[RMDB]
RNA sequence: GGGAACGACUCGAGUAGAGUCGAAAAGCACCAGAGGUCAAAGGUCUUCAUGUCUUCCUUUCGAGUGGGUGUCAAGCUUCCAGCAGCUCUCUGAGAGCCUGGGUUGCCUGUUGGGUGCAGACGCCGUUGCCCACCAUGCGGAGAGCUUCGGUGCGUGUCGAUUUGUAACUUUCGAGUUACAAAUCGAAAAAGAAACAACAACAACAAC
Reactivity to 2A3 in 0.01 (KOAc 150mM, MgCl2 10mM, bicine 150mM(pH8.5), 24C), signal-to-noise 2, nucleotides 027 to 156: g010c010a010c040c020a090g010a030g020g050u050c050a140a020a040g070g000u040c030u130u090c070a120u080g050u000c030u040u070c030c030u040u150u150c130g030a090g040u030g010g020g010u060g050u030c040a060a080g030c030u160u030c020c000a010g000c020a010g010c010u000c000u020c060u130g120a110g020a030g300c000c010u040g010g030g020u130u060g010c040c040u000g000u060u030g020g000g000u040g010c050a020g020a010c030g080c040c030g120u110u120g000c010c000c000a030c000c010a070u110g000c130g000g040a020g000a010g090c000u020u040c050g020g000u010g010c050g000u020g050
Reactivity to DMS in 0.01 (KOAc 150mM, MgCl2 10mM, bicine 150mM(pH8.5), 24C), signal-to-noise 1, nucleotides 027 to 156: g010c010a020c020c120a150g000a030g040g050u010c010a020a070a100g010g000u000c040u020u010c090a090u000g020u030c070u000u000c030c010u010u010u040c070g000a120g030u000g000g010g000u000g020u000c050a050a230g040c020u000u000c000c020a060g060c100a080g020c030u000c030u010c070u000g000a260g010a040g030c010c000u000g010g010g070u010u000g010c040c020u000g040u000u010g020g050g060u000g030c050a100g000a050c020g050c040c030g030u000u000g030c000c000c000a110c060c030a100u000g000c070g060g020a080g010a060g020c000u000u000c030g000g000u000g000c000g000u000g000